RNA sequence: GGGAACGACUCGAGUAGAGUCGAAAAUCCACUAUGAAUCUAGUCACUAAAUAAACACAAUUAACUACUGUGUGUAAUAGUGAGUGUUGAUAACACAAAAUAAUAGUAUAGUUUUGGAAGAUUAUACGCGCCCUUGCUCCGUUCGCGGAGCAAGGAAUUCAUGUCUCAAAUUCGUUUGAGACAUGAAAAAAGAAACAACAACAACAAC
Reactivity to 2A3 in 0.01 (KOAc 150mM, MgCl2 10mM, bicine 150mM(pH8.5), 24C), signal-to-noise 4, nucleotides 027 to 156: u010c040c010a060c080u250a230u260g090a110a060u070c120u120a060g100u030c010a000c000u000a010a030a050u010a020a060a000c000a000c010a030a090u140u100a120a030c050u120a030c030u090g010u000g000u010g000u020a010a040u000a010g000u000g000a040g030u020g020u040u030g080a160u210a250a010c020a010c020a030a070a080a050u230a090a070u080a080g020u020a010u010a050g000u010u060u140u200g130g030a080a050g000a090u010u060a020u030a050c040g020c000g090c060c000c000u000u020g000c010u000c000c000g040u060u060c120g000c000g100g010a000g000c000a000a010g000g000a000a010
Reactivity to DMS in 0.01 (KOAc 150mM, MgCl2 10mM, bicine 150mM(pH8.5), 24C), signal-to-noise 2, nucleotides 027 to 156: u020c020c010a120c150u010a070u050g030a200a110u010c100u010a130g010u000c010a000c000u000a000a030a090u000a110a270a000c010a010c000a040a000u010u010a110a200c200u010a060c020u010g040u010g000u000g000u000a140a300u000a010g020u010g010a040g050u000g020u000u010g010a090u000a080a100c120a080c010a050a050a060a120u000a110a300u000a080g010u000a040u000a030g000u000u000u000u000g000g000a090a230g000a050u000u000a030u000a010c010g000c090g040c110c010c000u000u000g010c000u000c000c010g020u000u000c300g000c030g030g010a020g000c010a000a000g010g000a000a010